[RMDB]
RNA sequence: GGGAACGACUCGAGUAGAGUCGAAAAGAUGCUGAGAACGAGGCCUGCAACUCAUUUCCCCAUUAAACAUUCUGAGAACAUCUGCACCGGUUUCCAAGGCUUCUCCCUCACUAAUUGCUCUGAUUAUUGUGUAACGCAAAUUCGUUUGCGUUACACAAAAAGAAACAACAACAACAAC
Reactivity to 2A3 in 0.01 (KOAc 150mM, MgCl2 10mM, bicine 150mM(pH8.5), 24C), signal-to-noise 3, nucleotides 027 to 126: g060a020u070g000c010u030g030a000g050a180a040c040g000a020g040g030c020c000u030g070c060a070a050c020u030c030a040u020u010u020c000c000c020c000a060u150u200a030a040a010c070a040u110u090c030u090g060a020g030a140a000c050a130u000c030u040g010c010a000c030c040g000g000u010u000u030c010c020a020a020g050g000c000u010u030c030u060c000c010c000u030c000a030c010u050a100a030u070u070g050c020u000c010u040g080a130u040u080a080u100
Reactivity to DMS in 0.01 (KOAc 150mM, MgCl2 10mM, bicine 150mM(pH8.5), 24C), signal-to-noise 2, nucleotides 027 to 126: g000a070u000g000c020u000g000a110g030a100a100c150g050a080g010g010c040c000u050g020c060a050a130c050u000c110a040u000u000u010c010c000c000c070a040u000u030a080a020a180c120a060u000u010c040u000g050a060g030a080a040c110a070u010c040u000g000c070a060c070c050g000g000u030u000u000c070c000a060a100g000g010c030u010u000c030u000c020c010c000u010c030a040c090u060a040a050u010u000g000c040u000c020u000g000a130u070u020a120u010
Structure probing data (2A3 and DMS) for a 177-nucleotide construct.
The reactions ran in a buffer of 150 mM KOAc, 10 mM MgCl2 and 150 mM bicine (pH 8.5), at 24 C.
For 2A3, 1,457 sequencing reads were counted.
DMS (dimethyl sulfate) methylates the pairing face of unpaired adenines and cytosines.